Structure probing data (2A3) for a 207-nucleotide construct. The reactions ran in a buffer of 150 mM KOAc, 10 mM MgCl2 and 150 mM bicine (pH 8.5), at 24 C. Reactivities are rounded to 0.1 and cut off at 0 and 3. Values cover nucleotides 27 to 156. High 2A3 reactivity points to a flexible backbone, as in loops and unpaired stretches.
[RMDB]
RNA sequence: GGGAACGACUCGAGUAGAGUCGAAAAGAGUUGGGCAUGUCGCGCGAUGACUUGAACAACCAGCUGUCCACUGCGGAACAGUCGGCGAUCAAGGAACUGGAUCGGCGCUCGAUUCGUCCGAAGAUGUAUGACGCGAUGAAGCACAUCAUCAUCACAGGCACAAAGUCAGUUUCGACUGACUUUGUGCAAAAGAAACAACAACAACAAC
Reactivity to 2A3 in 0.01 (KOAc 150mM, MgCl2 10mM, bicine 150mM(pH8.5), 24C), signal-to-noise 2, nucleotides 027 to 156: g000a000g000u010u030g020g030g000c070a130u230g000u030c010g000c000g000c040g130a100u040g070a030c020u020u030g010a010a010c020a030a030c030c000a000g000c000u000g000u010c000c050a150c190u290g090c240g020g060a220a000c000a000g080u040c020g020g000c050g030a090u010c000a010a000g100g010a140a070c060u110g060g060a100u080c030g020g000c000g010c000u020c000g010a020u050u010c000g010u020c030c000g040a080a000g000a000u050g050u160a040u020g090a090c050g000c040g130a140u210g150a070a090g070c000a090c000a100u030c000a000u010c020a000u080c110a060c050a090g150